[RMDB]
RNA sequence: GGGAACGACUCGAGUAGAGUCGAAAAGCGCUGACGGUGAUUCCGCUCGUGCGGGCAAUGUAAACGCCACUUUCUUUUUCGGCUUUAGCCAAGCUCUAAGGUUAGAGGGCGUUAGAAAUAUAUCCGACAUCUAGAAUUUUGGUGUGCUUGUCACGUACCUAAUAGAUUGCUUCGGCAAUCUAUUAGGAAAAGAAACAACAACAACAAC
Reactivity to DMS in 0.01 (KOAc 150mM, MgCl2 10mM, bicine 150mM(pH8.5), 24C), signal-to-noise 2, nucleotides 027 to 156: g000c100g000c020u000g010a090c020g010g070u010g030a130u010u000c030c020g020c020u010c130g000u010g030c040g000g000g040c060a100a090u010g020u000a130a040a070c010g050c000c000a070c030u000u000u000c010u000u000u000u000u000c040g020g020c010u000u000u000a180g010c200c210a090a030g020c000u000c070u000a050a100g040g020u000u000a040g040a130g000g000g000c010g000u000u000a100g010a080a100a160u010a120u010a140u000c020c000g000a050c050a050u000c040u000a070g000a090a160u000u000u000u010g010g020u000g040u010g000c070u000u000g010u000c020a110c070g000u000a130
Reactivity to 2A3 in 0.01 (KOAc 150mM, MgCl2 10mM, bicine 150mM(pH8.5), 24C), signal-to-noise 5, nucleotides 027 to 156: g030c040g030c110u080g020a030c020g050g050u060g050a140u300u080c030c020g020c070u050c060g040u060g000c000g010g010g010c070a070a070u110g030u130a140a010a010c000g000c000c010a020c010u030u030u000c000u030u120u020u040u100c050g010g000c020u020u030u090a040g040c070c020a020a020g010c010u030c010u090a060a050g070g010u050u060a030g060a210g070g020g000c000g010u010u040a000g040a020a140a010u120a010u030a030u090c010c010g050a050c040a050u040c050u100a090g080a250a220u060u100u100u200g030g010u020g020u050g040c030u040u070g030u080c030a020c130g020u090a050